[RMDB]
RNA sequence: GGGAACGACUCGAGUAGAGUCGAAAAGAAGAUAAGACACAAGACACCGUGGGCAGAUGACAAGAAAGUCCGUCGGUGUCGGUAAGGUCGUCAGUCACAGGCGACCGUUUUCUGUGACUCUAAAGAAGGUAUAGCCUGGUUUCGACCAGGCUAUACCAAAAGAAACAACAACAACAAC
Reactivity to DMS in 0.01 (KOAc 150mM, MgCl2 10mM, bicine 150mM(pH8.5), 24C), signal-to-noise 2, nucleotides 027 to 126: g000a020a040g000a020u000a080a120g010a160c260a070c060a070a110g010a010c000a000c000c000g020u000g000g000g020c010a010g000a300u050g000a210c300a200a110g000a010a110a040g000u000c000c010g000u000c000g000g000u000g010u000c000g000g030u000a140a030g000g020u000c010g000u000c000a150g040u010c180a100c190a070g000g000c000g020a020c010c040g000u000u000u000u000c000u000g000u040g000a060c080u000c090u000a000a050a100g030a060a150
Reactivity to 2A3 in 0.01 (KOAc 150mM, MgCl2 10mM, bicine 150mM(pH8.5), 24C), signal-to-noise 1, nucleotides 027 to 126: g090a020a000g000a050u030a100a000g000a000c000a000c000a040a030g000a000c020a000c000c010g020u020g000g000g000c000a000g000a300u200g050a120c170a000a280g040a010a070a000g000u000c000c000g020u050c000g050g000u000g000u010c000g000g000u080a000a000g000g000u000c000g000u000c000a000g170u090c060a110c010a190g000g010c030g010a000c000c020g030u090u000u020u000c010u000g050u080g000a000c000u000c050u170a160a120a000g030a020a090
The data come from the RNA Mapping Database (RMDB), library OK1LIB. Chemical mapping of a 177-nucleotide RNA with DMS and 2A3. 2A3 adducts were read by reverse transcription with SuperScript II with manganese. The reactions ran in a buffer of 150 mM KOAc, 10 mM MgCl2 and 150 mM bicine (pH 8.5), at 24 C.